[RMDB]
RNA sequence: GGGAACGACUCGAGUAGAGUCGAAAAGAUGGACUAACCAGUACCAAAGAGCUUUGGUACUGACGGCCCACGAUCCACGACCAAAGAGCUUUGGAGGUGGAUAGAACCUGAGAUCUCUUGAGGAUCAAAUCUUCCUUUACUUCGGUAAAGGAAGAUUAAAAGAAACAACAACAACAAC
Reactivity to 2A3 in 0.01 (KOAc 150mM, MgCl2 10mM, bicine 150mM(pH8.5), 24C), signal-to-noise 7, nucleotides 027 to 126: g100a210u030g000g000a000c000u010a070a030c070c000a010g000u000a000c000c000a010a010a010g300a070g130c160u060u010u010g000g000u000a000c000u000g000a000c020g010g000c010c000c000a010c020g020a000u000c000c000a000c010g120a040c010c010a020a020a020g300a100g190c160u040u030u020g030g010a070g130g000u000g000g000a000u010a040g060a010a030c010c020u080g060a070g010a090u000c020u010c030u180u290g060a110g060g010a010u000c000a000
Reactivity to DMS in 0.01 (KOAc 150mM, MgCl2 10mM, bicine 150mM(pH8.5), 24C), signal-to-noise 5, nucleotides 027 to 126: g020a160u010g020g000a080c010u020a120a170c230c020a000g000u000a000c000c000a000a000a040g020a210g020c210u020u000u000g000g000u000a010c000u000g000a040c200g000g000c020c010c010a050c030g000a040u000c010c010a020c010g010a260c010c000a000a020a040g010a160g020c200u000u000u000g000g010a060g000g030u000g000g000a030u000a030g000a130a120c020c000u000g000a110g000a020u000c000u000c030u030u040g000a170g000g000a030u010c010a110